[RMDB]
Notes: The data come from the RNA Mapping Database (RMDB), library TTRDEL. This 177-nucleotide RNA was probed chemically with DMS and 2A3. The 2A3 profile rests on 3,563 reads.
RNA sequence: GGGAACGACUCGAGUAGAGUCGAAAAGAUAUGGAUGGCUUACCAGCCUAAGACAGAACUUCGGAAACGAAGUUUCGAGGAACUACUGGAAAGCCAUCCUAAGUCAAAAGAGAGGUUCGCCUCUCAACUACUACGAAACGUUCGCGUUUCGUAGUAGAAAAGAAACAACAACAACAAC
Reactivity to DMS in 0.01 (KOAc 150mM, MgCl2 10mM, bicine 150mM(pH8.5), 24C), signal-to-noise 3, nucleotides 027 to 126: g000a000u010a300u000g000g020a020u010g020g010c000u000u000a160c000c020a010g000c050c030u000a040a080g010a110c300a160g010a010a000c000u000u000c000g000g000a090a090a160c000g000a010a020g000u000u000u000c010g000a110g000g040a090a080c050u020a240c000u000g000g000a090a020a030g010c000c000a000u000c000c000u010a010a110g000u000c010a060a070a070a160g010a000g000a020g000g000u000u020c300g010c000c000u010c000u010c000a040a130
Reactivity to 2A3 in 0.01 (KOAc 150mM, MgCl2 10mM, bicine 150mM(pH8.5), 24C), signal-to-noise 2, nucleotides 027 to 126: g010a020u040a020u110g000g020a000u020g000g010c000u010u040a130c020c020a030g070c020c030u070a130a020g080a050c060a030g060a020a010c000u020u000c010g040g030a060a060a040c010g000a030a000g000u050u030u030c040g010a040g010g040a180a080c130u300a040c000u300g000g010a030a010a000g020c000c000a000u000c000c000u000a010a010g000u000c010a020a030a150a020g000a000g000a010g070g040u110u180c300g170c040c000u000c000u000c000a000a000